[RMDB]
RNA sequence: GGGAACGACUCGAGUAGAGUCGAAAAUCGAUGGCGUUCGCGCCAUCGAAGAGCCGUACCGCGUAGCACGCGGUUAGGAGUGAAGAUAUCCAAGGCCAUGGAGGAGGCGUGCUUUCGAGCACGCCAACUAUUCAAAGAUUUUCGAAUCUUUGAAUAGAAAAGAAACAACAACAACAAC
Reactivity to 2A3 in 0.01 (KOAc 150mM, MgCl2 10mM, bicine 150mM(pH8.5), 24C), signal-to-noise 6, nucleotides 027 to 126: u020c010g000a010u010g000g010c030g030u060u060c260g010c000g020c100c000a010u000c000g000a010a000g000a010g010c010c020g010u020a010c010c020g010c000g040u030a050g120c220a030c080g010c000g000g000u000u040a060g000g020a040g010u150g130a120a060g040a150u100a050u150c010c010a020a040g070g000c010c020a040u100g060g020a050g030g080a050g000g000c000g010u000g000c010u060u080u110c180g030a010g000c000a000c000g000c000c000a000a000
Reactivity to DMS in 0.01 (KOAc 150mM, MgCl2 10mM, bicine 150mM(pH8.5), 24C), signal-to-noise 5, nucleotides 027 to 126: u000c000g010a010u010g010g020c010g030u010u020c230g030c000g040c000c000a000u000c000g010a010a070g020a120g010c010c010g010u000a030c010c000g000c010g020u000a140g020c120a300c010g020c000g000g010u000u000a050g020g000a080g010u010g000a120a060g010a090u000a080u000c020c020a050a090g010g000c020c060a100u000g000g010a080g010g020a140g010g000c000g020u000g010c000u000u000u010c180g010a020g010c020a010c000g000c000c000a010a050